Source information
Conditions: 150 mM KOAc, 10 mM MgCl2 and 150 mM bicine (pH 8.5), 24 C. Chemical mapping of a 207-nucleotide RNA with 2A3 and DMS. For 2A3 the reverse transcriptase was SuperScript II with manganese. For DMS the reverse transcriptase was MarathonRT.

RNA sequence: GGGAACGACUCGAGUAGAGUCGAAAAUGAGGUGCCUGCCGUAGUUCAUCAGCGAAACUAGCGUUUUUGAGCGAAGCUGCAGGUCACCGACAUCGUCGAGGAUAACGAGAAACUUGUGUCUACGGUGCGAUCGCGGCCGGGUCCGGGUCUUGAUGUCAACCCCACAGUAAUUCGUUACUGUGGGGUUAAAAGAAACAACAACAACAAC
Reactivity to 2A3 in 0.01 (KOAc 150mM, MgCl2 10mM, bicine 150mM(pH8.5), 24C), signal-to-noise 1, nucleotides 027 to 156: u080g010a010g050g000u000g010c000c000u040g010c000c000g060u040a040g010u040u040c010a010u030c010a010g000c000g050a150a110a260c230u200a070g140c010g010u050u030u000u000u000g010a010g000c000g040a170a070g070c010u000g010c010a000g030g000u050c000a000c000c000g000a000c000a000u040c010g100u020c000g050a010g190g000a050u040a110a030c060g000a010g040a080a010a000c010u040u130g000u000g060u100c070u040a050c050g000g020u050g090c000g000a070u120c040g010c040g070g110c000c060g050g000g000u020c000c030g020g010g020u010c080u020u060g040a020u110g020u160c000
Reactivity to DMS in 0.01 (KOAc 150mM, MgCl2 10mM, bicine 150mM(pH8.5), 24C), signal-to-noise 1, nucleotides 027 to 156: u010g000a260g010g050u000g040c040c000u000g030c040c030g000u010a150g050u000u000c010a070u000c060a100g020c070g020a230a060a130c180u000a110g020c070g000u010u000u000u010u010g000a090g000c020g030a110a300g030c040u010g060c030a050g000g040u000c010a000c040c010g030a060c070a040u030c020g020u010c000g000a050g000g020a120u000a060a120c030g020a160g000a120a080a130c070u000u010g020u000g000u000c060u010a140c020g030g000u000g040c020g010a060u000c060g000c060g010g000c020c020g020g050g000u000c030c000g000g040g020u010c030u000u000g020a120u010g010u000c080